[RMDB]
RNA sequence: GGGAACGACUCGAGUAGAGUCGAAAAUGAAAGUAGUCUCCUGCAGCGUCUGGGGUUUCCGUUGCAGUCCUCGCAACCAGGACCUCGGCGUGGCCUAGCGAGUUAUGGCGACGAAGGCCGUGAAAAACAACGCUAACAUGUUCGCAUGUUAGCGUUGAAAAGAAACAACAACAACAAC
Reactivity to DMS in 0.01 (KOAc 150mM, MgCl2 10mM, bicine 150mM(pH8.5), 24C), signal-to-noise 3, nucleotides 027 to 126: u000g000a060a140a070g000u010a050g020u000c040u000c020c010u010g010c080a210g010c030g010u000c010u010g050g010g010g010u000u000u010c140c300g000u000u000g000c010a160g000u020c090c170u010c100g000c010a020a000c020c100a290g000g000a020c010c000u000c010g010g010c040g030u000g000g000c020c080u000a130g000c020g010a100g000u000u010a090u010g010g010c020g000a090c070g010a150a110g000g010c000c010g030u030g000a000a070a040a140a100
Reactivity to 2A3 in 0.01 (KOAc 150mM, MgCl2 10mM, bicine 150mM(pH8.5), 24C), signal-to-noise 1, nucleotides 027 to 126: u120g020a010a030a050g180u110a030g040u000c040u000c050c010u020g050c040a020g020c000g000u000c020u220g000g000g000g000u030u060u060c040c040g000u020u000g000c010a000g080u100c000c040u030c090g000c000a010a040c060c030a020g020g030a010c000c000u000c020g000g000c000g000u020g030g030c020c000u040a010g040c010g060a020g020u120u080a140u170g220g000c020g000a100c070g030a130a020g060g000c000c040g060u180g050a060a080a030a010a020